This 177-nucleotide RNA was probed chemically with DMS. The data come from the RNA Mapping Database (RMDB), library TTRINS.
[RMDB]
RNA sequence: GGGAACGACUCGAGUAGAGUCGAAAAGAUAUGGAAGCAUGGAAAACGUUCCACGGUUUGUAGCUCUACCGUCGGAAACGACGGUAGAGCGCAGAUAAAUUGGAACGUUUUCCAUGCUUCCUAAGUCCACAAUAGUAUCCUUCGGGAUACUAUUGUGAAAAGAAACAACAACAACAAC
Reactivity to DMS in 0.01 (KOAc 150mM, MgCl2 10mM, bicine 150mM(pH8.5), 24C), signal-to-noise 2, nucleotides 027 to 126: g000a100u010a300u010g020g010a000a010g010c010a020u000g000g010a020a010a010a000c010g020u000u000c000c000a040c300g020g010u000u000u000g010u010a150g030c000u000c000u000a000c000c000g010u000c000g000g010a120a120a210c000g040a020c000g010g010u000a000g000a000g040c000g000c010a010g000a020u000a050a120a140u000u000g000g010a020a000c010g020u000u000u010u000c010c000a000u000g000c000u000u000c000c000u000a010a070g000u010c050
For DMS, 3,326 sequencing reads were counted.